[RMDB]
RNA sequence: GGGAACGACUCGAGUAGAGUCGAAAAAUGCUGCGCCGUGUUGCCAUAUAAUCAUUUUAUUAAUCAACUAUUUAGCAGACGCUAAAACUCAAUGUAUUUCUGAGGAAGCGUGGUGCAUAAUGCCAUGCUACUUGAUCUACUUCGGUAGAUCAAGUAGAAAAGAAACAACAACAACAAC
Reactivity to 2A3 in 0.01 (KOAc 150mM, MgCl2 10mM, bicine 150mM(pH8.5), 24C), signal-to-noise 4, nucleotides 027 to 126: a010u070g000c030u020g020c010g010c000c010g040u020g050u040u020g010c000c000a060u120a010u020a210a090u160c040a090u020u150u070u230a180u030u130a070a100u110c020a040a060c020u070a100u160u060u050a020g000c040a030g060a300c070g000c030u030a060a070a050a020c030u030c050a020a050u090g090u130a190u160u150u060c050u070g040a000g020g030a040a000g010c020g000u030g000g050u020g000c040a050u130a120a020u160g020c020c010a040u100g010
Reactivity to DMS in 0.01 (KOAc 150mM, MgCl2 10mM, bicine 150mM(pH8.5), 24C), signal-to-noise 4, nucleotides 027 to 126: a110u000g010c030u010g010c020g020c010c050g010u000g030u000u000g030c030c050a130u020a060u000a060a030u030c100a090u000u010u000u010a080u010u010a140a150u010c030a050a080c050u020a120u000u010u010a070g000c020a100g030a070c130g010c010u000a040a040a070a190c040u000c040a030a050u000g010u010a080u000u020u000c140u020g020a040g010g020a120a100g030c010g030u000g010g010u010g010c120a110u000a080a030u010g010c030c050a070u000g000
Description:
Structure probing data (2A3 and DMS) for a 177-nucleotide construct. Values are in units of 0.01, from 0 to 300, in steps of 10. For DMS the reverse transcriptase was MarathonRT.